[RMDB]
RNA sequence: GGGAACGACUCGAGUAGAGUCGAAAAGGCGCACCCGAUCCGCCCGGAUAUGGUCAUUGAGAUGAACAACUUCUACACCCUGACCGUUUACGAGAAGGGCGCGGAAGUGAUUCGCAUGAUCCACACACUAGCGUGAGUAGUUCGCUACUCACGCUAGAAAAGAAACAACAACAACAAC
Reactivity to DMS in 0.01 (KOAc 150mM, MgCl2 10mM, bicine 150mM(pH8.5), 24C), signal-to-noise 2, nucleotides 027 to 126: g030g010c000g020c080a100c040c020c010g000a110u000c060c050g000c050c040c080g000g040a150u010a060u000g020g000u000c000a010u000u000g020a060g000a080u010g000a110a110c190a090a070c020u000u000c000u000a100c020a000c000c000c020u000g010a300c130c010g000u000u000u010a090c120g000a000g000a190a080g000g000g010c050g050c010g030g000a030a060g020u000g020a220u000u020c020g000c050a040u000g000a070u000c010c100a180c120a080c150a150
Reactivity to 2A3 in 0.01 (KOAc 150mM, MgCl2 10mM, bicine 150mM(pH8.5), 24C), signal-to-noise 1, nucleotides 027 to 126: g030g000c010g030c040a020c010c040c030g030a030u000c020c020g040c010c010c020g060g010a020u090a070u170g030g000u000c010a010u000u210g040a090g070a130u090g030a090a040c030a030a020c070u010u000c000u030a070c000a040c030c000c000u010g010a040c040c000g020u060u150u150a100c040g020a000g020a080a010g010g000g000c030g000c010g030g000a020a050g000u040g030a060u040u030c030g020c030a000u020g030a020u000c000c000a040c000a000c010a000